The record gives the reactivity of an RNA of 177 nucleotides to DMS and 2A3.
The reactions ran in a buffer of 150 mM KOAc, 10 mM MgCl2 and 150 mM bicine (pH 8.5), at 24 C.
Values cover nucleotides 27 to 126.
The DMS profile rests on 1,984 reads.
In probing experiments dimethyl sulfate is read out at A N1 and C N3, which are open when not base-paired.

RNA sequence: GGGAACGACUCGAGUAGAGUCGAAAAGAUAUGGAAAUGAACUACGCUGUAAGGAGGAGCUCGGAAACGAGCUCUACCCACCUUGAGGCGCAUUUCCUAAGUCAAAAGCCGCUGUUCGCAGCGGCAAGUUAGAUUCUACGUUCGCGUAGAAUCUAACAAAAGAAACAACAACAACAAC
Reactivity to DMS in 0.01 (KOAc 150mM, MgCl2 10mM, bicine 150mM(pH8.5), 24C), signal-to-noise 3, nucleotides 027 to 126: g000a050u000a220u010g020g000a020a010a010u000g000a050a100c080u020a300c040g020c020u000g010u000a070a050g000g010a300g000g000a020g000c000u000c010g000g000a060a050a100c000g000a020g030c010u000c000u000a040c090c060c140a110c110c090u000u010g000a230g000g000c070g000c000a010u000u000u000c000c030u000a030a160g000u000c010a070a090a070a160g000c010c000g020c000u010g010u000u000c190g010c000a000g010c010g000g010c000a000a030
Reactivity to 2A3 in 0.01 (KOAc 150mM, MgCl2 10mM, bicine 150mM(pH8.5), 24C), signal-to-noise 2, nucleotides 027 to 126: g000a000u040a000u050g020g000a000a020a010u020g020a130a160c140u190a090c300g000c010u080g090u300a270a220g030g020a030g000g010a000g000c000u000c010g020g000a010a000a010c000g000a000g000c010u000c010u000a000c020c020c000a120c020c100u070u130g130a070g030g000c010g000c030a000u000u010u010c000c000u000a050a020g020u020c030a060a120a040a120g000c010c000g030c010u000g040u080u120c300g020c120a000g010c000g000g000c000a000a000
For 2A3 the reverse transcriptase was SuperScript II with manganese. For DMS the reverse transcriptase was MarathonRT.